[RMDB]
RNA sequence: GGGAACGACUCGAGUAGAGUCGAAAAGAUAUGGAUAAACGCAAGCCUUAACUAUCGUGUCGGAAACGACACGACGAAUUAAAGUGAUGACCGUUUAUCCUAAGUCAAAGAGUGCUUCGGCACUCAAGGAAGUGUACUGGUUCGCCAGUACACUUCCAAAAGAAACAACAACAACAAC
Reactivity to 2A3 in 0.01 (KOAc 150mM, MgCl2 10mM, bicine 150mM(pH8.5), 24C), signal-to-noise 2, nucleotides 027 to 126: g040a020u020a020u090g000g020a000u010a000a020a000c020g000c050a250a210g050c020c050u180u170a070a050c050u020a020u040c000g000u000g000u020c000g000g000a040a110a030c000g000a000c000a000c010g020a000c020g070a100a210u070u130a220a020a050g090u100g250a300u200g050a090c010c040g010u010u010u000a000u000c010c000u020a070a030g040u010c060a050a070a110g000a000g000u000g000c000u000u120c130g120g000c010a000c000u010c020a000a000
Reactivity to DMS in 0.01 (KOAc 150mM, MgCl2 10mM, bicine 150mM(pH8.5), 24C), signal-to-noise 2, nucleotides 027 to 126: g020a020u000a300u000g020g020a010u000a000a010a020c020g010c040a090a140g010c000c020u000u000a000a030c080u000a180u010c020g030u000g000u000c000g010g000a090a070a210c000g040a000c000a000c000g000a000c060g010a040a130u000u000a000a000a020g010u010g010a070u020g000a130c300c000g000u000u000u000a000u000c000c000u000a020a120g000u000c030a050a040a110g000a010g010u000g000c000u020u040c280g010g000c000a000c000u000c000a030a060

An RNA of 177 nucleotides, treated with 2A3 and DMS and read out base by base. DMS adducts were read by reverse transcription with MarathonRT. Source: RMDB library TTRDEL, as collected in RNAgym. For DMS, 1,581 sequencing reads were counted. The 2A3 profile rests on 2,911 reads.